[RMDB]
RNA sequence: GGGAACGACUCGAGUAGAGUCGAAAAGUGCAGCAGUUCGCUGCUGCACAAAAGGCAUCGUAUCAUUGCUUCGAAGCCAAACUAGAAAGUAGAAAGCAGUGAAAAGACACUUCUUCGGAAGUGUCAAGUACCAAGAGAGCUUCGGCUCUCUUGGUACAAAAGAAACAACAACAACAAC
Reactivity to DMS in 0.01 (KOAc 150mM, MgCl2 10mM, bicine 150mM(pH8.5), 24C), signal-to-noise 1, nucleotides 027 to 126: g050u000g010c010a000g010c010a010g020u020u000c130g030c050u000g000c000u030g000c000a000c020a000a040a240a030g020g000c000a130u000c000g000u010a030u020c000a000u000u000g010c020u030u000c030g030a080a060g000c030c000a030a040a170c090u020a120g000a050a060a070g020u010a090g020a020a080a040g030c080a010g000u000g000a140a070a110a130g000a030c000a000c000u000u000c000u000u000c190g000g000a000a000g010u000g000u000c000a020a070
Reactivity to 2A3 in 0.01 (KOAc 150mM, MgCl2 10mM, bicine 150mM(pH8.5), 24C), signal-to-noise 3, nucleotides 027 to 126: g000u010g000c000a000g020c010a020g010u040u180c230g040c090u000g010c010u010g000c000a000c010a000a060a000a010g020g020c000a020u000c010g020u070a040u090c000a020u020u010g000c000u010u030c000g030a060a000g030c020c020a040a040a020c040u060a060g200a120a140a010g110u090a050g180a080a080a000g030c010a000g010u020g020a050a070a020a010g010a010c000a000c000u000u020c000u020u050c200g080g010a000a000g000u000g000u000c000a000a000